An RNA of 207 nucleotides, treated with DMS and 2A3 and read out base by base. The data come from the RNA Mapping Database (RMDB), library OK3TST. The DMS profile rests on 1,934 reads. Conditions: 150 mM KOAc, 10 mM MgCl2 and 150 mM bicine (pH 8.5), 24 C.
RNA sequence: GGGAACGACUCGAGUAGAGUCGAAAAUCCCAAAGGUUCUCGAAUCCGAAAGGUACGGAGGAACCGCUUUUUGGGGUUAAUCUGCAGUGAAGCUGCAGUAGGGAUACCUUCUGUCCCGCACCCGACAGCUAACUCCGGAGGGAAUAAAGGAAGGAGACAUCGUCAUCGUAUUCGUACGAUGACGAUGAAAAGAAACAACAACAACAAC
Reactivity to DMS in 0.01 (KOAc 150mM, MgCl2 10mM, bicine 150mM(pH8.5), 24C), signal-to-noise 1, nucleotides 027 to 156: u000c000c000c000a120a090a060g000g000u010u000c000u010c010g010a090a140u000c020c000g010a150a300a130g010g030u000a110c050g010g030a140g110g010a060a050c040c050g000c140u000u000u000u000u000g030g020g070g010u010u000a100a080u000c000u010g000c000a010g000u010g000a180a260g000c010u020g020c010a020g050u000a020g030g000g030a020u000a030c030c090u000u000c060u000g010u010c080c000c020g050c150a050c030c030c010g020a090c090a010g060c040u000a080a220c010u000c000c010g000g010a140g000g000g000a100a120u010a070a080a130g000g000a070a030g020g020a270g010a200
Reactivity to 2A3 in 0.01 (KOAc 150mM, MgCl2 10mM, bicine 150mM(pH8.5), 24C), signal-to-noise 2, nucleotides 027 to 156: u000c010c000c000a040a090a000g010g000u070u010c000u000c000g080a120a070u040c030c000g070a080a040a030g030g010u040a040c020g000g010a010g040g010a060a080c020c010g010c060u180u170u040u090u160g030g000g000g000u000u000a060a030u050c000u000g020c000a000g010u070g240a190a010g200c000u000g000c000a000g020u010a030g010g010g010a020u070a080c000c000u030u020c010u060g000u000c010c000c000g020c010a060c000c010c000g000a090c070a010g000c020u020a060a000c000u000c010c000g010g030a010g020g000g050a070a000u110a110a080a010g080g000a000a020g020g010a050g030a000